[RMDB]
RNA sequence: GGGAACGACUCGAGUAGAGUCGAAAAGAAGAAAAAGAGCAGCUGAACUUUACCAUCCUGCUGCUGCUUCAGGACGAAGCAUGUCAAGUCCGCGAGGGCCCUCAAUACGGGACCAGCAAGGUGGCAAGCUCAUCCAGUGAUUCGUCACUGGAUGAGCAAAAGAAACAACAACAACAAC
Reactivity to DMS in 0.01 (KOAc 150mM, MgCl2 10mM, bicine 150mM(pH8.5), 24C), signal-to-noise 1, nucleotides 027 to 126: g040a090a090g020a010a040a070a180a100g000a050g040c000a010g080c010u000g000a220a110c100u000u030u000a130c010c030a020u000c010c000u040g020c050u000g010c040u000g020c020u010u010c010a170g010g010a100c120g020a090a070g030c030a030u000g040u000c050a060a220g000u000c020c020g000c190g020a120g000g030g000c000c000c000u000c100a030a040u000a210c160g000g000g000a080c010c010a020g000c010a010a020g020g010u020g000g000c090a040a150